[RMDB]
RNA sequence: GGGAACGACUCGAGUAGAGUCGAAAAGAAAAUAAGAGCGUAAUCGCGUCUUGACGUGAGUGAGCCCACACGAAGAGCUAUCCCAAGUGGGAUAGCAUAGCUCACAAUACGCUAAGAUUCGUGUGAACAUGACUGCGUGGUUCGCCACGCAGUCAUGAAAAGAAACAACAACAACAAC
Reactivity to 2A3 in 0.01 (KOAc 150mM, MgCl2 10mM, bicine 150mM(pH8.5), 24C), signal-to-noise 2, nucleotides 027 to 126: g050a010a060a020a020u240a060a000g090a010g010c000g000u020a030a030u050c000g000c000g030u000c080u090u160g120a000c030g000u000g000a010g000u000g000a000g020c040c000c070a020c020a000c000g000a000a040g040a060g000c000u000a000u000c010c000c000a220a190g260u300g080g000g000a020u000a030g000c020a000u020a000g000c000u000c020a000c000a010a030u050a000c000g000c000u020a020a000g090a200u000u000c000g000u000g000u000g030a030a060